[RMDB]
RNA sequence: GGGAACGACUCGAGUAGAGUCGAAAAAAAGUUUGACUCUGGCACCGUUAGCAAGACUUCAGACUGGAAGUGCAAGGUGACAGAUGUACUUUUCCCCGGCCAAAAAUACAGUAGCGAUUGUAAUGUCAAGCACCGCCCUUCGGGGCGGUGAAAAGAAACAACAACAACAAC
Reactivity to 2A3 in 0.01 (KOAc 150mM, MgCl2 10mM, bicine 150mM(pH8.5), 24C), signal-to-noise 2, nucleotides 027 to 129: a000a000a000g130u230u050u050g060a020c000u000c000u000g000g030c000a000c010c000g200u120u000a040g010c050a040a130g000a040c000u010u010c000a050g060a300c000u300g080g000a110a000g000u000g050c000a000a000g080g000u000g030a000c010a000g000a070u230g070u000a070c000u000u000u000u000c000c010c000c000g060g000c010c010a000a000a000a000a060u070a020c000a000g100u100a000g030c100g120a000u150u170g080u110a000a030u000g210u070c000a020a020g020
Reactivity to DMS in 0.01 (KOAc 150mM, MgCl2 10mM, bicine 150mM(pH8.5), 24C), signal-to-noise 1, nucleotides 027 to 129: a060a000a030g020u030u070u060g030a050c060u000c020u070g020g000c000a060c010c000g030u000u000a100g000c020a170a050g050a300c010u020u010c010a180g030a180c120u030g090g000a010a010g000u020g040c000a070a090g030g010u000g000a010c020a000g010a000u040g070u070a080c000u000u000u000u000c000c080c040c000g000g010c000c000a060a240a000a130a030u120a030c210a000g000u000a020g000c090g000a030u040u000g020u000a050a070u060g000u000c050a190a070g050